[RMDB]
RNA sequence: GGGAACGACUCGAGUAGAGUCGAAAACACUGUACUGCUGAUGCUUGGCUUUUUUGUUGGUGUUGGCAUCUUCGUGAUGAAAGAUCAGAAGGAGCACGGACACCAGGAUAGAAAAGAAGGGAAGCACUGGAUAACUCUACUUCGGUAGAGUUAUCCAAAAAGAAACAACAACAACAAC
Reactivity to DMS in 0.01 (KOAc 150mM, MgCl2 10mM, bicine 150mM(pH8.5), 24C), signal-to-noise 3, nucleotides 027 to 126: c060a090c140u010g020u030a070c130u010g030c030u000g030a190u000g000c030u010u000g030g010c010u000u000u000u000u000u000g020u010u000g010g010u000g030u000u000g000g010c010a050u000c000u000u000c010g000u000g010a000u000g010a170a080a120g000a080u000c010a220g000a010a000g010g020a050g010c010a100c170g020g030a010c020a010c020c000a040g000g010a050u020a030g000a020a040a010a030g010a070a070g000g000g030a060a030g010c010a040c160
Reactivity to 2A3 in 0.01 (KOAc 150mM, MgCl2 10mM, bicine 150mM(pH8.5), 24C), signal-to-noise 3, nucleotides 027 to 126: c090a020c020u110g110u180a070c030u060g070c040u050g050a050u040g080c010u030u030g080g040c000u070u020u020u000u000u030g110u040u050g000g020u010g000u000u010g040g000c000a050u000c000u010u000c030g290u040g040a020u020g060a170a110a030g260a060u000c000a000g000a000a000g030g000a010g020c010a050c210g090g000a010c000a020c000c000a000g040g070a060u130a100g090a010a050a000a000g050a000a020g040g040g060a000a000g000c020a010c050
The data come from the RNA Mapping Database (RMDB), libraries RFM100 and RFMREP. An RNA of 177 nucleotides, treated with DMS and 2A3 and read out base by base. The reactions ran in a buffer of 150 mM KOAc, 10 mM MgCl2 and 150 mM bicine (pH 8.5), at 24 C. 2A3 adducts were read by reverse transcription with SuperScript II with manganese.